[RMDB]
RNA sequence: GGGAACGACUCGAGUAGAGUCGAAAAUGUAUGUUCGCAUACAGUAAGAGCGUACUACAGAGCGACAUGCUCCACCGUAGAUCUCUAUCCCAAAUAGGAUAGAUCUCUACGUGGAGCAACAGCGCUCUGUAUCGCGGGUUUAAGACUUCGGUCUUAAUAAAGUCUGUCAAUUCGUUGACAGACUUUAAAAAGAAACAACAACAACAAC
Reactivity to DMS in 0.01 (KOAc 150mM, MgCl2 10mM, bicine 150mM(pH8.5), 24C), signal-to-noise 4, nucleotides 027 to 156: u000g010u000a020u000g010u010u000c260g040c020a050u000a010c030a070g000u000a110a140g010a130g010c000g030u010a060c100u000a020c010a010g000a030g020c010g000a070c090a300u000g000c000u000c010c000a000c070c090g040u010a000g010a020u000c080u000c000u000a010u010c000c000c010a060a160a290u000a050g010g000a050u000a010g010a010u000c050u020c000u000a000c000g030u000g000g000a010g000c000a000a010c050a130g010c000g010c000u000c000u000g020u000a000u000c030g000c030g000g020g000u000u000u010a050a030g010a020c010u000u020c280g060g010u000c000u000u000a030a200
Reactivity to 2A3 in 0.01 (KOAc 150mM, MgCl2 10mM, bicine 150mM(pH8.5), 24C), signal-to-noise 2, nucleotides 027 to 156: u070g000u010a010u000g030u020u070c300g000c110a000u020a010c020a030g080u110a090a070g070a010g070c040g010u130a090c040u020a010c020a000g000a000g000c000g150a210c030a090u020g000c000u000c000c010a040c040c160g000u000a000g010a010u020c000u000c000u010a000u060c030c010c040a180a240a130u290a110g000g000a010u000a010g000a010u010c010u000c000u020a000c000g000u000g000g000a000g020c000a000a000c010a000g000c010g010c000u000c000u000g000u000a000u040c000g000c010g060g010g010u040u010u070a020a000g010a000c010u020u070c300g090g000u010c000u000u010a020a010
Notes: Chemical mapping of a 207-nucleotide RNA with DMS and 2A3. For 2A3, 1,877 sequencing reads were counted. The RNA was probed in 150 mM KOAc, 10 mM MgCl2 and 150 mM bicine (pH 8.5) at 24 C. Source: RMDB library RNAMAK, as collected in RNAgym.